About this RNA
The record gives the reactivity of an RNA of 177 nucleotides to 2A3 and DMS. 2A3 adducts were read by reverse transcription with SuperScript II with manganese. For DMS the reverse transcriptase was MarathonRT. Conditions: 150 mM KOAc, 10 mM MgCl2 and 150 mM bicine (pH 8.5), 24 C. It was measured as part of the RMDB library OK1LIB.

RNA sequence: GGGAACGACUCGAGUAGAGUCGAAAAUAUCAAUAAGAAUUCCGGUCUUUUCCGGAGCCACCUAGUGGAAUGCUACGUGCAUAAAUGCACGUAGCUAAAGACCCGAAGGCUAGCAAUAGCUAGCCAACACUCAUAAUUAGUUCGCUAAUUAUGAGUGAAAAGAAACAACAACAACAAC
Reactivity to 2A3 in 0.01 (KOAc 150mM, MgCl2 10mM, bicine 150mM(pH8.5), 24C), signal-to-noise 9, nucleotides 027 to 126: u120a010u070c050a040a090u160a200a060g080a100a080u100u010c010c000g010g050u040c140u080u160u110u050c010c000g000g010a000g010c000c010a020c040c170u090a060g040u030g050g030a080a060u110g000c000u000a000c000g020u000g000c000a060u110a280a250a050u200g000c000a000c000g000u000a000g000c000u000a000a000a000g010a020c000c000c030g070a110a040g010g000c000u000a000g000c020a100a300u070a210g000c000u000a000g000c000c000a000a000
Reactivity to DMS in 0.01 (KOAc 150mM, MgCl2 10mM, bicine 150mM(pH8.5), 24C), signal-to-noise 4, nucleotides 027 to 126: u030a070u040c080a050a100u020a100a080g010a140a190u030u000c000c020g000g010u020c290u010u010u040u040c010c020g000g000a020g000c030c020a020c020c110u000a060g020u000g010g020a090a060u010g010c000u010a000c000g000u000g020c000a100u040a090a120a130u030g020c000a010c010g000u000a000g020c000u000a020a040a100g010a150c020c010c020g000a050a120g000g020c000u000a000g020c000a180a130u030a050g010c000u000a010g000c000c000a060a050